[RMDB]
RNA sequence: GGGAACGACUCGAGUAGAGUCGAAAAUGCAGGAAGAACCAGUACCGGCAUUAUUGGAGUGAAAACCUUUUCCAGUGCUUCAAUUGCAGCCUCUGCCUCAAUGGGACCGUGCACCUCUCCUGUGAGCGGAAAUACACAGUUUCGACUGUGUAUUUCCAAAAGAAACAACAACAACAAC
Reactivity to 2A3 in 0.01 (KOAc 150mM, MgCl2 10mM, bicine 150mM(pH8.5), 24C), signal-to-noise 3, nucleotides 027 to 126: u090g000c020a020g050g010a120a080g020a120a040c020c010a010g000u040a060c020c020g040g000c030a020u020u100a030u090u150g050g010a060g030u090g120a110a090a060a080c030c000u090u010u090u000c060c030a040g010u030g100c030u030u020c000a070a130u100u090g030c030a020g010c020c020u070c030u030g030c000c010u070c030a040a070u070g010g040g010a040c020c050g010u020g010c000a020c030c000u060c020u030c030c000u060g020u030g050a030g030c070
Reactivity to DMS in 0.01 (KOAc 150mM, MgCl2 10mM, bicine 150mM(pH8.5), 24C), signal-to-noise 3, nucleotides 027 to 126: u010g000c030a040g000g020a090a090g030a130a110c070c080a070g010u000a080c050c040g030g020c050a060u010u020a070u010u010g010g000a030g000u000g000a070a040a130a110c090c040u010u000u010u010c010c030a140g010u010g000c040u000u000c060a040a060u000u010g030c080a090g010c040c020u000c050u000g010c030c030u000c080a050a050u000g000g000g000a110c070c040g020u000g020c040a060c050c040u000c040u000c000c010u000g000u010g020a110g030c230